This 177-nucleotide RNA was probed chemically with DMS. Values cover nucleotides 27 to 126. For DMS, 902 sequencing reads were counted. The data come from the RNA Mapping Database (RMDB), library TTRDES.
RNA sequence: GGGAACGACUCGAGUAGAGUCGAAAAGAUAUGGAGCGGAGGAGACAUGGUUGCGAUCGGAAACGAUCGGCAACCAACAGCUCCCACGCUCCUAAGUCAAACAGGGCCAGGUUCGCCUGGCCCUGAACCAAACUCUACCGUUCGCGGUAGAGUUUGGAAAAGAAACAACAACAACAAC
Reactivity to DMS in 0.01 (KOAc 150mM, MgCl2 10mM, bicine 150mM(pH8.5), 24C), signal-to-noise 1, nucleotides 027 to 126: g000a000u000a150u000g000g000a010g040c000g060g010a300g030g010a010g020a000c100a130u000g000g000u020u010g040c000g030a000u000c010g020g000a040a020a070c000g010a000u010c000g030g040c000a000a010c010c000a030a020c200a100g010c010u000c000c010c240a170c040g000c000u010c020c010u000a000a040g000u000c020a090a110a300c040a010g000g000g000c000c000a040g000g000u000u030c240g040c010c000u000g000g010c060c000c000u000g000a070a110